Structure probing data (DMS and 2A3) for a 177-nucleotide construct.
Conditions: 150 mM KOAc, 10 mM MgCl2 and 150 mM bicine (pH 8.5), 24 C.
RNA sequence: GGGAACGACUCGAGUAGAGUCGAAAAGAUCUCUGAAUCCUGAAUUUGUUUGUGUGCUGGACAGAACCCAUCUCUAGCACCAUUUAAAUUCAGCAUUUCUGAGGAGUGAAGUUAGUUCGCUAACUUCGAAUUACUACCAGUUCGCUGGUAGUAAUUCAAAAGAAACAACAACAACAAC
Reactivity to DMS in 0.01 (KOAc 150mM, MgCl2 10mM, bicine 150mM(pH8.5), 24C), signal-to-noise 5, nucleotides 027 to 126: g010a120u010c000u010c000u010g000a010a010u000c300c010u000g010a010a000u000u000u000g010u010u000u010g010u020g020u000g010c010u000g000g010a040c230a080g010a080a200c110c120c070a100u000c160u000c020u000a010g010c010a010c010c010a010u000u000u000a000a010a010u000u000c000a010g020c150a020u000u010u010c030u000g010a020g000g010a120g000u010g000a010a010g010u000u000a010g000u010u000c270g010c000u010a000a010c000u000u000c010
Reactivity to 2A3 in 0.01 (KOAc 150mM, MgCl2 10mM, bicine 150mM(pH8.5), 24C), signal-to-noise 3, nucleotides 027 to 126: g020a060u080c010u010c000u030g000a010a010u020c010c000u000g000a010a010u000u020u000g040u040u040u000g200u040g000u000g020c000u010g000g000a030c020a160g120a200a120c050c030c040a090u040c010u000c010u020a000g010c000a010c000c000a000u030u030u010a000a010a000u000u010c000a000g000c020a020u030u080u060c050u030g020a010g030g030a070g080u170g000a000a010g000u010u010a010g010u030u040c160g000c120u000a000a000c000u010u010c030